[RMDB]
RNA sequence: GGGAACGACUCGAGUAGAGUCGAAAAGAUAUGGAAUGGCAAGGGAGUUACAAUCGGAAACGAUUGAAUAACGACGAUCUUGUCCAUUCCUAAGUCAAACGUCGCUGAUGUUCGCAUCAGCGACGAACGACUCUAAUUAGUUCGCUAAUUAGAGUCGAAAAGAAACAACAACAACAAC
Reactivity to DMS in 0.01 (KOAc 150mM, MgCl2 10mM, bicine 150mM(pH8.5), 24C), signal-to-noise 2, nucleotides 027 to 126: g010a020u000a210u010g000g000a020a020u000g000g000c010a000a020g030g020g000a150g010u000u010a150c000a010a000u000c000g000g010a080a020a090c000g010a010u010u000g000a150a190u020a010a020c050g030a120c300g000a120u010c000u000u010g000u030c010c000a020u000u000c010c000u000a010a060g010u000c020a110a110a210c070g000u000c030g080c000u000g000a010u010g030u000u010c250g000c000a000u000c000a020g000c010g030a020c030g000a010a080
Reactivity to 2A3 in 0.01 (KOAc 150mM, MgCl2 10mM, bicine 150mM(pH8.5), 24C), signal-to-noise 2, nucleotides 027 to 126: g000a010u040a040u100g000g000a010a010u000g000g010c010a000a000g030g000g040a060g020u000u010a030c010a010a000u000c020g020g000a020a010a030c010g000a010u000u020g040a120a140u130a020a010c020g300a090c100g030a050u050c000u000u010g010u020c000c000a010u010u000c000c000u000a020a000g020u000c040a080a040a100c030g010u040c020g000c010u010g000a020u060g160u180u170c300g010c200a010u000c010a000g000c100g000a000c000g010a010a000